[RMDB]
RNA sequence: GGGAACGACUCGAGUAGAGUCGAAAAGAUAUGGAAAGCUGGAGCUUAUUACCGUUUGACGUCGGAAACGACCGAGGUAAGUAAGCGUUGAAAGCUUUCCUAAGUCAAAGACACGUUCGCGUGUCAAGGAAAGUACUAUGUUCGCAUAGUACUUUCCAAAAGAAACAACAACAACAAC
Reactivity to 2A3 in 0.01 (KOAc 150mM, MgCl2 10mM, bicine 150mM(pH8.5), 24C), signal-to-noise 4, nucleotides 027 to 126: g000a010u050a000u130g000g000a020a000a000g010c010u020g010g020a020g000c010u010u010a010u000u020a020c020c020g070u050u190u230g060a040c030g010u020c000g000g050a080a080a070c020g010a010c010c010g020a030g000g000u020a030a040g100u030a000a010g000c010g030u060u010g010a010a000a000g000c000u000u000u010c000c000u000a050a010g020u020c040a040a060a120g010a010c000a000c010g050u080u100c270g020c000g130u010g000u000c030a010a020
Reactivity to DMS in 0.01 (KOAc 150mM, MgCl2 10mM, bicine 150mM(pH8.5), 24C), signal-to-noise 8, nucleotides 027 to 126: g010a030u010a300u000g000g000a010a000a010g000c000u000g000g010a110g010c000u000u000a030u000u000a010c000c000g010u010u010u010g010a090c300g000u000c000g000g000a090a080a170c010g010a010c000c010g000a050g010g020u000a010a030g010u010a020a010g010c000g000u000u010g000a100a140a030g000c010u000u000u000c000c010u000a010a090g010u000c030a070a110a130g000a010c000a010c000g010u000u010c250g020c010g030u000g010u000c000a070a100